Source information:
Chemical mapping of a 207-nucleotide RNA with 2A3 and DMS. For DMS, 8,350 sequencing reads were counted. For DMS the reverse transcriptase was MarathonRT. The reactions ran in a buffer of 150 mM KOAc, 10 mM MgCl2 and 150 mM bicine (pH 8.5), at 24 C.
[RMDB]
RNA sequence: GGGAACGACUCGAGUAGAGUCGAAAAGCCGAGAGCUGCAGCAAGAUGGCGGCGUGACCGGGAGGGCGCUCGCCCUCUUCCUGCCCGGAUGACAACCGAUCCAUAGCUCGCAUCAUGGCAUUCGAUAUUGACGGUGAGUCGAUGAGGCAGGUCAAUCCGAACAGUAUAAGUUCGCUUAUACUGUUCGAAAAGAAACAACAACAACAAC
Reactivity to 2A3 in 0.01 (KOAc 150mM, MgCl2 10mM, bicine 150mM(pH8.5), 24C), signal-to-noise 6, nucleotides 027 to 156: g040c010c030g080a060g010a020g100c080u090g010c040a040g010c020a050a040g040a090u060g030g000c000g000g000c010g020u040g110a070c030c010g030g050g010a110g010g000g000c040g000c140u200c110g000c000c010c000u020c010u030u030c000c000u000g000c000c010c010g030g020a090u170g010a020c030a040a020c020c010g060a220u000c010c010a020u020a030g050c040u030c060g010c020a050u060c050a090u230g120g000c040a020u030u050c010g020a030u020a040u070u040g020a020c020g010g020u060g030a090g010u020c020g000a020u090g010a110g010g000c020a000g020g000u060c060a030a050u060c060
Reactivity to DMS in 0.01 (KOAc 150mM, MgCl2 10mM, bicine 150mM(pH8.5), 24C), signal-to-noise 3, nucleotides 027 to 156: g020c020c040g010a110g000a080g030c010u010g010c030a090g010c040a060a100g010a080u000g010g000c050g030g010c030g020u000g000a110c020c000g040g020g010a140g030g010g030c040g000c100u010c080g050c010c000c010u000c000u000u000c010c010u000g010c000c020c030g020g020a080u010g000a090c070a110a060c020c020g010a120u000c030c020a120u010a110g010c060u010c060g000c060a130u000c050a160u000g020g030c030a260u000u000c040g000a130u000a130u000u000g000a090c010g000g010u000g000a170g040u000c030g000a130u000g010a110g020g010c000a050g010g010u000c080a060a250u010c020